Structure probing data (DMS and 2A3) for a 177-nucleotide construct.
2A3 is a SHAPE reagent: it acylates the 2'-hydroxyl of flexible nucleotides of all four kinds.
The RNA was probed in 150 mM KOAc, 10 mM MgCl2 and 150 mM bicine (pH 8.5) at 24 C.
DMS adducts were read by reverse transcription with MarathonRT.
The data come from the RNA Mapping Database (RMDB), library M2PK50.

[RMDB]
RNA sequence: GGGAACGACUCGAGUAGAGUCGAAAACAGCAAUUAUUCGUAAUUGCUGAAUGGCGGACCCAGGGCGGAAGGAGCGCGCAGGACUCCUUCGCCGCCUUUUAAUAAGCAGGUACUUCGGUACCUGCAAUCUCUUGUUAAAUUUCGAUUUAACAAGAGAAAAAGAAACAACAACAACAAC
Reactivity to DMS in 0.01 (KOAc 150mM, MgCl2 10mM, bicine 150mM(pH8.5), 24C), signal-to-noise 5, nucleotides 027 to 126: c000a000g010c000a020a000u000u000a020u000u020c180g010u000a010a010u000u000g000c000u000g000a050a050u010g010g030c110g020g000a240c000c010c020a100g000g000g010c020g010g010a040a010g010g010a010g020c100g020c150g020c210a090g020g000a200c000u000c000c010u000u000c100g010c070c000g010c010c000u000u000u020u010a060a160u010a090a110g000c010a010g010g010u000a000c000u000u010c170g030g000u000a000c000c010u000g000c000a020a030
Reactivity to 2A3 in 0.01 (KOAc 150mM, MgCl2 10mM, bicine 150mM(pH8.5), 24C), signal-to-noise 3, nucleotides 027 to 126: c000a000g020c000a010a010u020u020a020u070u150c140g040u060a020a000u000u010g000c000u000g020a000a060u070g040g030c080g050g050a070c010c010c020a040g040g000g010c060g030g000a010a000g000g000a010g020c080g020c050g030c130a040g010g140a160c000u000c000c000u020u020c010g020c010c010g000c010c000u080u110u050u060a180a200u160a110a020g010c000a000g000g010u010a000c010u030u120c210g060g000u000a000c030c000u000g010c000a000a000